[RMDB]
RNA sequence: GGGAACGACUCGAGUAGAGUCGAAAAAAUUCGCGGUAAUCACGAUCGCGCGCGAAUGACCUUUAUUGAUUUCAUGUAUUACUGGCAUGAAAGGAUAUUCAAGCAGAUUAAAAGAAAAUCGCGCUAAAACAAUUGAUUAACCCGCUUCAAAAAUAACGUUACGAGAGACUUUCGAGUCUCUCGUAACAAAAGAAACAACAACAACAAC
Reactivity to 2A3 in 0.01 (KOAc 150mM, MgCl2 10mM, bicine 150mM(pH8.5), 24C), signal-to-noise 2, nucleotides 027 to 156: a000a000u200u150c040g010c030g040g010u100a100a090u070c050a040c180g040a070u100c040g000c000g000c000g000c020g110a030a020u020g020a040c000c000u110u020u020a100u070u040g180a040u010u110u000c000a000u000g040u020a050u040u200a120c120u110g070g030c000a000u000g000a000a030a000g020g010a010u040a030u130u140c080a230a000g000c030a050g120a290u070u130a110a120a020a090g080a000a060a000a060u000c010g010c040g000c050u000a100a020a000a000c030a130a170u030u100g040a020u090u090a080a070c000c000c000g090c040u170u150c070a050a090a140a000a050u300a060a000c030